[RMDB]
RNA sequence: GGGAACGACUCGAGUAGAGUCGAAAAACGCGAAAGCGUGGUCUAGCGAACCAAUUAGGCUGCUUGAUGCGGCCAAUUGCUGACAGAAAAGCUACCUUAGGGAUAACAGAGUCGUCACCCGCAAGAGCUCUUUCCUGAUGUUCGCAUCAGGAAAGAGAAAAGAAACAACAACAACAAC
Reactivity to DMS in 0.01 (KOAc 150mM, MgCl2 10mM, bicine 150mM(pH8.5), 24C), signal-to-noise 3, nucleotides 027 to 126: a000c000g010c000g010a150a070a180g010c030g000u000g000g010u000c100u020a040g000c020g010a130a070c110c010a010a010u020u000a120g050g040c000u000g000c000u000u030g000a130u030g020c000g000g010c000c070a010a000u010u010g000c070u020g010a060c120a120g010a160a060a060a100g030c040u000a060c030c050u000u030a050g020g000g000a150u070a050a060c050a210g000a010g000u010c010g040u000c050a070c010c020c000g010c300a080a100g010a090g010
Reactivity to 2A3 in 0.01 (KOAc 150mM, MgCl2 10mM, bicine 150mM(pH8.5), 24C), signal-to-noise 7, nucleotides 027 to 126: a000c030g010c010g030a150a010a010g010c020g000u030g000g020u030c070u060a010g010c010g030a020a040c000c000a000a010u010u020a110g010g000c000u010g000c010u080u240g180a120u300g050c010g010g000c000c000a000a000u010u020g010c030u030g080a050c020a060g180a060a080a010a010g020c010u020a030c000c010u080u100a070g010g040g080a030u050a150a050c030a030g000a010g000u000c000g000u010c050a300c100c000c010g000c030a090a090g050a030g060
This 177-nucleotide RNA was probed chemically with DMS and 2A3.
Reactivities are given for positions 27 through 126.
For 2A3 the reverse transcriptase was SuperScript II with manganese.
The reactions ran in a buffer of 150 mM KOAc, 10 mM MgCl2 and 150 mM bicine (pH 8.5), at 24 C.